RNA sequence: GGGAACGACUCGAGUAGAGUCGAAAAGGGUCCGCGUUCCAUCCUUUCUUACCUUGUGGCCGGCAUGGUCCCAGCCUCCUCGCUGGCGCCGGCUGGGCAACAUUCCGAGGGGACCGUCCCUCGGUAAGCUUCUCUUUAACUUCGGUUAAAGAGAAGCAAAAGAAACAACAACAACAAC
Reactivity to DMS in 0.01 (KOAc 150mM, MgCl2 10mM, bicine 150mM(pH8.5), 24C), signal-to-noise 1, nucleotides 027 to 126: g010g020g010u000c020c100g030c010g000u000u000c020c040a060u010c030c010u000u000u000c050u010u000a130c050c080u020u020g000u000g040g020c010c000g000g010c040a070u000g020g010u020c300c000c010a040g000c050c070u000c170c130u010c160g020c010u000g020g000c170g000c040c020g000g040c030u000g000g000g000c040a000a050c090a110u010u000c010c000g000a010g010g030g000g000a170c190c240g000u020c000c000c010u000c030g020g000u010a000a110
Chemical mapping of a 177-nucleotide RNA with DMS. The data come from the RNA Mapping Database (RMDB), library VIROID. The DMS profile rests on 1,138 reads.